Conditions: 150 mM KOAc, 10 mM MgCl2 and 150 mM bicine (pH 8.5), 24 C. The record gives the reactivity of an RNA of 170 nucleotides to 2A3 and DMS. For DMS the reverse transcriptase was MarathonRT. Source: RMDB library 15KLIB, as collected in RNAgym. Values cover nucleotides 27 to 129.
RNA sequence: GGGAACGACUCGAGUAGAGUCGAAAAUCCUAGGUCCGGAGUCGACCUCCAUCUGAUCCGUCCUGGCUCUCUUCGCCGGGGGAGCUCCCUCCCCAUCCUUGUCCUUUCUUAUUAUUCCUCGGAUGUUAUGCCCAUGUGUUCGCACAUGGGAAAAGAAACAACAACAACAAC
Reactivity to 2A3 in 0.01 (KOAc 150mM, MgCl2 10mM, bicine 150mM(pH8.5), 24C), signal-to-noise 9, nucleotides 027 to 129: u020c000c000u020a030g000g030u030c070c090g050g020a020g030u050c020g030a080c010c010u010c020c010a100u050c050u070g040a060u030c020c020g040u010c020c010u020g020g000c000u000c010u000c040u170u140c060g030c020c000g000g010g000g000g000a010g030c020u080c010c000c000u020c000c000c000c000a030u040c000c000u020u050g060u060c010c000u040u100u080c040u040u120a180u130u040a090u110u090c010c000u030c020g040g010a030u050g040u100u080a100u210g060
Reactivity to DMS in 0.01 (KOAc 150mM, MgCl2 10mM, bicine 150mM(pH8.5), 24C), signal-to-noise 6, nucleotides 027 to 129: u000c010c000u020a000g010g010u030c020c030g000g030a010g000u020c000g040a100c060c000u020c040c030a090u030c050u040g040a070u030c020c050g040u000c000c000u000g000g000c030u020c070u030c070u050u030c120g000c050c000g030g010g020g010g010a080g000c050u040c000c000c000u000c000c000c000c000a060u020c050c050u000u050g040u030c040c050u010u040u020c020u010u020a100u040u040a160u010u010c010c030u000c020g030g020a060u040g010u030u010a120u020g020